[RMDB]
RNA sequence: GGGAACGACUCGAGUAGAGUCGAAAAGGAAGCCAGAACGACUGAGAAAGAAAAGAGAGCAACGGGGCUAGCUGCCGGGUGUUCCAUCCAUGGGAUCGGUGCCGAGUGAGGCUUAUCCCGGGGGUGACGAGCUCCCACUUCGGUGGGAGCAAAAGAAACAACAACAACAAC
Reactivity to 2A3 in 0.01 (KOAc 150mM, MgCl2 10mM, bicine 150mM(pH8.5), 24C), signal-to-noise 3, nucleotides 027 to 129: g050g020a020a000g040c010c020a000g010a050a020c070g040a010c030u040g020a010g020a110a080a010g050a000a060a010a010g020a000g020a010g020c000a000a040c040g030g000g040g020c010u040a040g030c000u000g010c000c000g010g000g000u030g010u030u030c010c010a020u010c000c020a040u110g050g000g000a010u040c130g090g130u150g070c020c000g010a030g050u100g040a070g000g010c030u030u060a040u060c000c000c020g030g000g000g000g000u030g000a020c060g010a010
Reactivity to DMS in 0.01 (KOAc 150mM, MgCl2 10mM, bicine 150mM(pH8.5), 24C), signal-to-noise 4, nucleotides 027 to 129: g000g030a200a010g080c030c040a130g000a050a020c160g020a070c060u060g010a060g040a020a020a050g020a010a010a010a030g010a080g030a000g070c070a000a000c160g030g040g000g070c110u050a080g060c020u030g020c000c000g000g000g000u040g000u080u010c060c020a060u040c080c000a080u000g040g010g000a040u020c100g000g030u050g040c000c070g080a110g020u010g060a120g030g020c040u000u030a100u080c100c010c030g040g010g000g020g040u010g040a070c080g020a000

An RNA of 170 nucleotides, treated with 2A3 and DMS and read out base by base. Conditions: 150 mM KOAc, 10 mM MgCl2 and 150 mM bicine (pH 8.5), 24 C. Reactivities are rounded to 0.1 and cut off at 0 and 3. In probing experiments dimethyl sulfate is read out at A N1 and C N3, which are open when not base-paired. The 2A3 profile rests on 5,281 reads. The data come from the RNA Mapping Database (RMDB), library 15KLIB.